An RNA of 177 nucleotides, treated with DMS and 2A3 and read out base by base.
The RNA was probed in 150 mM KOAc, 10 mM MgCl2 and 150 mM bicine (pH 8.5) at 24 C.
For DMS the reverse transcriptase was MarathonRT.
Values are in units of 0.01, from 0 to 300, in steps of 10.

[RMDB]
RNA sequence: GGGAACGACUCGAGUAGAGUCGAAAAGAUAUGGAACUAUCGUAGUUUGCGAUGAAAUCGGAAACGAUGGAGCAACUACGAGUAGUUCCUAAGUCAAAACCCAUCAUGACUUCGGUCAUGAUGGGAAGAAUUACGUCUCCUUCGGGAGACGUAAUUCAAAAGAAACAACAACAACAAC
Reactivity to DMS in 0.01 (KOAc 150mM, MgCl2 10mM, bicine 150mM(pH8.5), 24C), signal-to-noise 1, nucleotides 027 to 126: g000a040u010a300u000g000g000a000a000c000u000a050u000c000g010u000a000g010u010u000u000g020c000g000a140u000g010a030a100a000u000c000g010g000a180a140a210c000g000a000u000g000g020a160g000c000a000a020c000u000a000c000g000a000g040u000a000g010u000u000c000c000u000a020a030g000u020c030a050a080a100a120c000c000c000a000u000c000a000u030g000a010c000u000u000c280g040g010u000c000a030u000g000a010u000g000g010g020a000a050
Reactivity to 2A3 in 0.01 (KOAc 150mM, MgCl2 10mM, bicine 150mM(pH8.5), 24C), signal-to-noise 2, nucleotides 027 to 126: g010a030u060a050u180g010g000a000a000c010u010a000u010c030g010u010a000g030u060u130u270g070c180g120a300u040g030a020a000a000u000c020g000g060a070a060a070c040g010a020u000g020g000a000g010c000a000a040c000u020a020c010g030a000g010u000a000g000u000u000c000c000u010a040a000g060u010c020a000a010a110a180c020c000c000a000u000c000a000u000g000a000c000u140u050c300g090g000u000c010a000u010g010a010u000g000g020g030a020a010